The record gives the reactivity of an RNA of 207 nucleotides to 2A3.
[RMDB]
RNA sequence: GGGAACGACUCGAGUAGAGUCGAAAACGCGCGCGCACAUGUCUGGACACAUGACAAACGCCCGCCGGGAGGGGGCCGCUGUGGCCGAGUCAAGUGCCCAGGAGGGUUAGUCAAAACCACCAUCAGUUUGAGGUUCGUCCUUGGCCCUCUUCGGCGAAUAGUGACGGAAAUUCGUUUCCGUCACUAUAAAAGAAACAACAACAACAAC
Reactivity to 2A3 in 0.01 (KOAc 150mM, MgCl2 10mM, bicine 150mM(pH8.5), 24C), signal-to-noise 1, nucleotides 027 to 156: c090g080c000g000c010g000c020g080c030a020c020a090u020g040u010c070u130g170g000a090c030a020c000a120u090g060a090c070a040a230a020c010g080c000c000c000g000c000c000g080g230g030a010g000g000g000g070g000c020c010g060c040u010g090u170g080g040c070c010g010a010g020u020c010a000a180g050u020g070c030c000c010a030g070g080a160g010g050g000u060u040a050g030u150c020a050a000a140a140c000c030a000c020c020a100u160c020a070g050u080u080u070g060a040g010g000u050u050c050g050u170c020c050u070u200g000g010c050c000c000u000c000u030u000c000g000g040c010g000a000
Record summary
It was measured as part of the RMDB library OK3TST. The RNA was probed in 150 mM KOAc, 10 mM MgCl2 and 150 mM bicine (pH 8.5) at 24 C.